An RNA of 177 nucleotides, treated with DMS and 2A3 and read out base by base. The reactions ran in a buffer of 150 mM KOAc, 10 mM MgCl2 and 150 mM bicine (pH 8.5), at 24 C. The 2A3 profile rests on 2,440 reads. DMS adducts were read by reverse transcription with MarathonRT.

RNA sequence: GGGAACGACUCGAGUAGAGUCGAAAAGAUAUGGAUGUAGAGCAACAGCUAACGGGAUCGGAAACGAUCUUUAGACAUGCUUGAGGUCCUAAGUCAAAAGUACAAUCAACUUCGGUUGAUUGUACAAGUCUUGUGAAAACUUCGGUUUUCACAAGACAAAAGAAACAACAACAACAAC
Reactivity to DMS in 0.01 (KOAc 150mM, MgCl2 10mM, bicine 150mM(pH8.5), 24C), signal-to-noise 3, nucleotides 027 to 126: g000a020u000a300u000g000g010a020u010g020u000a300g000a000g010c010a040a150c300a100g000c020u000a000a100c300g000g000g000a000u000c000g010g000a040a050a170c000g010a010u000c000u000u000u000a050g010a100c120a150u010g000c000u000u000g010a210g000g010u000c000c020u000a010a110g000u010c040a040a080a050a150g000u000a000c000a010a010u030c000a000a000c010u000u040c220g010g010u000u000g010a010u000u000g030u010a000c010a020a050
Reactivity to 2A3 in 0.01 (KOAc 150mM, MgCl2 10mM, bicine 150mM(pH8.5), 24C), signal-to-noise 1, nucleotides 027 to 126: g030a010u080a010u110g000g000a030u130g010u090a010g000a010g030c050a020a260c080a210g040c030u030a030a030c120g090g040g030a000u000c000g020g070a040a020a050c010g000a000u000c000u000u020u020a030g010a030c080a080u190g000c000u020u020g010a040g050g020u000c000c010u000a070a000g040u020c020a040a040a000a170g000u000a000c000a000a010u010c000a020a010c010u040u070c230g100g000u010u010g010a010u000u020g010u000a000c000a000a000